[RMDB]
RNA sequence: GGGAACGACUCGAGUAGAGUCGAAAAGAAAAGAAAUCUAUCACUUGAACACAGGUGUGGGCUUACCUGACCAUGGCUGUCAAUAAGGAGGGGGGAGGUGUACUGGUAAUGAUCCCCACAGCUUGUUGGUAAGCUGUUACAGGAGCUUUAGGCAACACUUGCUCUGGCCAUGCCCUUCAGUCCUGGCCCUGGCUAUCUCUGUUCUGUUGGCGCAUGAUGCCAUGGUUUUGGUCACCUCAAGGCCUGCUUAGUGCUUGGUAAACAGACGCAGCUAGUUCGCUAGCUGCAAAAGAAACAACAACAACAAC
Reactivity to DMS in 0.01 (KOAc 150mM, MgCl2 10mM, bicine 150mM(pH8.5), 24C), signal-to-noise 6, nucleotides 027 to 266: g000a130a070a120a140g010a090a110a070u010c040u010a050u010c020a050c030u000u020g020a120a100c240a180c030a020g010g010u010g020u000g000g000g000c140u010u000a030c020c020u000g000a030c030c020a020u000g000g010c010u010g010u000c020a030a070u010a070a070g000g000a070g010g010g000g000g010g010a040g000g040u000g000u010a090c120u000g000g020u000a030a040u000g000a090u000c010c000c100c170a040c010a000g010c020u000u000g000u020u020g020g010u020a020a020g000c010u000g000u000u020a100c300a150g000g010a040g000c010u000u010u000a070g010g010c040a080a050c060a040c040u000u000g020c030u000c060u000g010g010c020c010a040u000g010c060c050c080u000u010c160a110g000u010c050c060u000g000g010c030c010c070u000g000g000c040u000a120u010c050u010c040u000g000u010u000c060u000g000u010u000g000g000c050g020c150a070u020g010a070u010g010c010c030a010u000g010g000u010u000u010u000g000g010u000c170a090c230c020u000c040a070a080g010g000c010c020u000g000c120u000u000a080g020u000g000c070u000u000g000g010u000a070a080a120c110a100g000a200c200
Reactivity to 2A3 in 0.01 (KOAc 150mM, MgCl2 10mM, bicine 150mM(pH8.5), 24C), signal-to-noise 4, nucleotides 027 to 266: g020a000a110a010a010g110a030a170a020u080c070u120a040u100c040a020c040u110u140g090a150a050c070a000c000a090g080g000u050g030u070g100g040g020c020u020u050a020c000c000u020g020a020c000c010a010u020g000g010c030u050g040u040c020a020a040u120a180a060g080g020a050g030g020g000g000g020g000a030g020g010u050g010u070a090c050u030g040g000u040a090a080u080g050a060u070c010c010c010c000a020c000a000g000c010u030u060g060u110u040g160g040u060a000a010g000c020u010g040u020u090a050c040a050g010g040a040g020c010u070u100u150a060g060g020c020a130a020c020a080c050u050u080g020c000u020c030u030g020g000c010c000a010u010g000c030c000c000u090u080c040a060g050u060c010c020u010g020g030c000c000c030u030g030g010c010u030a040u120c040u000c000u080g270u150u030c030u040g020u030u010g010g000c040g000c090a090u120g040a080u140g050c000c020a010u010g070g000u010u010u130u100g020g000u010c010a000c030c010u050c030a070a040g100g000c000c030u020g000c020u030u040a020g010u010g040c040u030u030g050g000u110a050a020a030c060a050g180a070c270